[RMDB]
RNA sequence: GGGAACGACUCGAGUAGAGUCGAAAACCGGGCCUCGGUUCCAGAAGGGAGAGGAGCCCGCCAAGGCGCGCAAGAGAGCGGGCUGCCUCGCAGUCCGAGCCGGAGAGGGAGCGCGAGCCGCGCCGGCUUCCCUCCAAGGGUUCGCCCUUGGAGGGAAAAAAGAAACAACAACAACAAC
Reactivity to 2A3 in 0.01 (KOAc 150mM, MgCl2 10mM, bicine 150mM(pH8.5), 24C), signal-to-noise 1, nucleotides 027 to 126: c010c000g000g040g010c010c010u050c020g050g000u100u000c000c000a040g090a180a030g140g050g000a110g000a000g010g020a000g000c000c000c000g020c020c020a030a010g130g020c010g000c000g010c040a160a010g130a040g010a020g110c000g000g000g030c010u110g210c010c000u010c020g000c010a000g040u020c050c000g010a030g000c000c000g000g000a030g050a020g010g080g020a050g000c040g000c020g000a020g010c040c100g010c010g010c000c000g000g000c000
Reactivity to DMS in 0.01 (KOAc 150mM, MgCl2 10mM, bicine 150mM(pH8.5), 24C), signal-to-noise 2, nucleotides 027 to 126: c010c030g010g000g060c090c030u030c050g020g010u000u000c000c040a170g010a160a050g000g040g010a270g030a000g000g010a110g030c020c000c010g010c000c060a080a100g000g000c040g000c030g050c060a130a080g000a190g000a190g000c000g020g000g010c000u000g020c000c050u000c030g010c060a130g000u040c030c040g000a040g020c000c000g000g010a110g000a210g010g000g000a060g050c010g030c040g000a060g000c040c040g030c080g000c020c010g000g000c040